[RMDB]
RNA sequence: GGGAACGACUCGAGUAGAGUCGAAAACGUAUUCGUGAUGAACAAUCUUGGGAUGCUUAUCUCGUCAUGGAAGCGAAGUCAUUGCCUGCUAUUAACUAGUUGCUUUUUCUCUGACGAUGAGAAUAAAGAUCCCUACGUGGUUCGCCACGUAGGGAUCAAAAGAAACAACAACAACAAC
Reactivity to 2A3 in 0.01 (KOAc 150mM, MgCl2 10mM, bicine 150mM(pH8.5), 24C), signal-to-noise 1, nucleotides 027 to 126: c010g000u050a140u060u110c050g030u020g060a090u080g000a010a030c020a080a050u040c050u090u090g130g000g020a010u030g100c020u060u110a050u030c000u000c000g000u030c020a050u090g030g000a040a000g050c030g050a080a000g060u000c010a110u060u080g050c020c020u110g010c010u020a040u130u090a080a030c110u050a030g030u030u050g000c000u020u000u000u040u000c030u010c010u050g080a110c070g060a110u080g030a010g070a050a030u140a070a060a010
Reactivity to DMS in 0.01 (KOAc 150mM, MgCl2 10mM, bicine 150mM(pH8.5), 24C), signal-to-noise 1, nucleotides 027 to 126: c080g000u000a030u000u000c030g030u000g000a060u020g010a130a030c160a130a050u000c040u010u000g010g000g010a060u000g030c090u010u000a080u010c060u020c020g000u000c030a070u000g000g000a030a100g020c190g000a070a020g000u010c120a050u000u000g010c080c050u000g010c030u000a040u000u000a100a150c220u000a020g000u000u000g000c010u000u000u000u010u000c020u000c100u000g000a040c070g030a040u000g000a020g020a090a060u020a050a060a070